[RMDB]
RNA sequence: GGGAACGACUCGAGUAGAGUCGAAAAAAAAAAGAUAUGGACUACUGAUGACCUACGGCGACAACAGCAAGCCUCGGAAACGAGGCUUGACAUGUCGAAGUAGCAAGGUAGUCCUAAGUCAAAAAAACAACUUUAUGUGGUUCGCCACAUAAAGUUGAAAAGAAACAACAACAACAAC
Reactivity to DMS in 0.01 (KOAc 150mM, MgCl2 10mM, bicine 150mM(pH8.5), 24C), signal-to-noise 1, nucleotides 027 to 126: a030a030a170a060a180a060g040a000u020a300u010g030g030a050c000u020a040c000u000g010a090u000g000a140c300c000u000a000c000g030g010c040g000a000c000a010a120c300a120g000c070a000a000g000c000c000u000c000g000g030a040a080a220c030g040a010g000g000c010u000u030g040a010c130a060u000g030u010c030g000a090a000g040u000a010g000c000a020a000g040g000u030a000g020u000c000c000u030a000a110g000u000c040a000a000a180a050a050a130a070